[RMDB]
RNA sequence: GGGAACGACUCGAGUAGAGUCGAAAACUGCAGGUCAACGGUACUUCUUCAGAUCAGCUAUUGCAGAAGAUAGGUCAUCCAAGCGCUCUGGGCCAGUGCGACUGUAUAUAGGAGCUUAUGAUUUGAACCAGAAGCUAACUCUCUCCGAAACAAUGAGCACGUAAAAUGAUUUCGAUCAUUUUACGUGAAAAGAAACAACAACAACAAC
Reactivity to 2A3 in 0.01 (KOAc 150mM, MgCl2 10mM, bicine 150mM(pH8.5), 24C), signal-to-noise 7, nucleotides 027 to 156: c040u060g000c040a030g030g010u080c020a050a000c070g040g000u030a040c030u030u040c000u030u040c030a020g010a120u030c030a020g050c020u090a070u140u150g000c020a020g020a080a000g030a080u110a060g020g030u040c030a050u050c070c040a070a020g030c020g000c040u020c030u050g010g030g010c020c020a030g020u040g030c010g040a050c030u030g040u100a050u020a030u070a200g040g020a030g010c010u090u060a060u110g090a090u110u110u140g030a040a010c010c000a020g010a080a010g020c020u030a060a030c010u010c010u000c010u010c070c020g090a110a070a030c040a040a140u150g020a020g050
Reactivity to DMS in 0.01 (KOAc 150mM, MgCl2 10mM, bicine 150mM(pH8.5), 24C), signal-to-noise 3, nucleotides 027 to 156: c070u000g010c040a040g030g030u000c010a090a090c080g000g030u000a060c040u010u000c020u000u000c040a100g030a050u000c040a110g020c030u000a030u000u000g000c010a110g000a120a150g000a080u000a040g020g030u000c020a090u010c030c050a080a110g010c050g020c040u010c050u010g010g010g010c040c030a090g040u000g020c060g030a120c020u000g000u000a100u000a140u000a110g000g000a110g020c030u010u000a080u000g010a120u010u010u000g000a040a050c030c020a060g030a060a100g020c010u010a030a070c060u000c010u000c020u010c030c010g020a160a060a060c060a070a080u000g020a130g010